Chemical mapping of a 177-nucleotide RNA with DMS and 2A3. The reactions ran in a buffer of 150 mM KOAc, 10 mM MgCl2 and 150 mM bicine (pH 8.5), at 24 C. For 2A3 the reverse transcriptase was SuperScript II with manganese.
[RMDB]
RNA sequence: GGGAACGACUCGAGUAGAGUCGAAAACUUUGGUGAGGCCCUAUCUAGUAGAGCAAUCCACCAAGCAGGUGAUUUCACACAAUUCAGGUUCUCAUAGAAAAUGCGCCCUGACUUGACAGGUAUGGUCAUAUUAGCUGCGGUUCGCCGCAGCUAAUAUAAAAGAAACAACAACAACAAC
Reactivity to DMS in 0.01 (KOAc 150mM, MgCl2 10mM, bicine 150mM(pH8.5), 24C), signal-to-noise 2, nucleotides 027 to 126: c010u010u010u000g000g020u000g020a090g020g010c010c000c040u040a000u010c130u040a180g000u000a010g000a060g000c010a030a070u000c060c000a040c000c000a010a070g030c130a100g020g020u000g030a100u000u000u010c000a140c130a210c170a060a080u020u010c060a040g000g020u030u080c000u010c000a040u000a110g000a020a080a140a090u020g000c160g000c300c000c030u000g000a030c060u010u010g020a090c010a110g010g000u000a000u050g000g000u000c090
Reactivity to 2A3 in 0.01 (KOAc 150mM, MgCl2 10mM, bicine 150mM(pH8.5), 24C), signal-to-noise 2, nucleotides 027 to 126: c020u070u030u030g030g000u030g030a050g030g000c000c030c010u000a020u030c070u020a010g080u030a020g010a010g000c020a040a020u020c020c010a020c010c010a000a010g140c100a060g040g040u080g030a140u030u080u100c040a000c030a000c020a010a040u110u070c010a040g000g060u080u080c010u010c020a040u030a090g130a060a130a020a010u100g010c040g070c020c000c010u020g080a050c030u080u090g060a040c010a060g090g000u130a020u170g010g040u050c010
For 2A3, 909 sequencing reads were counted.